[RMDB]
RNA sequence: GGGAACGACUCGAGUAGAGUCGAAAAAUUUUUAAUAAGGAAACUACCUCAGUUUAUUAGCAGUGAACAGCAAAUUAGUUGUCACAAAGUACUAGAAAAAUGUCAAGAUGCCAUUCAUUGGUUGUGUCAAUUCAUUUUGCUUUUUCCUGACCAUGUACGUACUAUGAUCGUUCGCGAUCAUAGUACGAAAAGAAACAACAACAACAAC
Reactivity to 2A3 in 0.01 (KOAc 150mM, MgCl2 10mM, bicine 150mM(pH8.5), 24C), signal-to-noise 1, nucleotides 027 to 156: a020u130u120u120u180u160a150a160u210a020a020g070g000a110a140a000c030u040a120c020c010u080c040a090g020u020u050u100a050u080u270a180g020c030a020g000u030g100a020a000c000a000g000c000a020a020a020u020u000a000g000u000u000g020u010c000a010c020a000a100a110g080u190a110c090u090a030g250a160a060a040a020a040u090g000u090c060a000a130g090a250u160g020c070c020a020u050u040c050a080u130u210g000g000u030u030g020u030g000u020c000a000a000u000u060c000a000u030u030u000u120g000c000u000u000u000u000u160c000c000u050g140a190c050c040a090u160g120u100a020